This 177-nucleotide RNA was probed chemically with DMS and 2A3.
2A3 adducts were read by reverse transcription with SuperScript II with manganese.
The reactions ran in a buffer of 150 mM KOAc, 10 mM MgCl2 and 150 mM bicine (pH 8.5), at 24 C.
Reactivities are given for positions 27 through 126.
The 2A3 profile rests on 26,399 reads.
DMS adducts were read by reverse transcription with MarathonRT.
2A3 is a SHAPE reagent: it acylates the 2'-hydroxyl of flexible nucleotides of all four kinds.
RNA sequence: GGGAACGACUCGAGUAGAGUCGAAAAGAUAUGGACGGGUGGAGUGGCUCCAACAGCUAGCUCGGAAACGAGCUAGACAUGGAGCGCCACACCGUCCUAAGUCAAAACACAUAGUUCGCUAUGUGAACACACUACUAGAGUUCGCUCUAGUAGUGUGAAAAGAAACAACAACAACAAC
Reactivity to DMS in 0.01 (KOAc 150mM, MgCl2 10mM, bicine 150mM(pH8.5), 24C), signal-to-noise 8, nucleotides 027 to 126: g000a070u010a300u010g000g010a010c010g010g010g010u000g000g010a080g020u010g020g010c000u000c000c000a040a120c300a150g000c010u000a010g000c000u000c000g010g010a110a120a230c000g010a010g000c000u000a000g000a030c100a190u000g000g010a020g010c000g010c000c010a010c000a110c000c010g000u000c000c000u000a000a090g010u000c050a130a070a140a210c010a000c010a010u000a010g000u010u020c290g020c010u000a000u000g000u000g000a150a270
Reactivity to 2A3 in 0.01 (KOAc 150mM, MgCl2 10mM, bicine 150mM(pH8.5), 24C), signal-to-noise 6, nucleotides 027 to 126: g020a010u070a030u170g000g000a000c020g010g040g030u030g000g040a130g090u300g180g030c010u000c010c010a110a100c050a070g040c010u000a000g000c010u000c000g010g010a080a110a040c010g000a000g000c000u000a000g000a000c000a020u090g000g000a000g000c000g000c010c000a010c010a020c000c000g000u000c000c000u010a000a000g000u000c010a020a020a070a080c010a000c000a010u020a010g030u090u080c300g030c180u010a000u030g000u010g040a090a010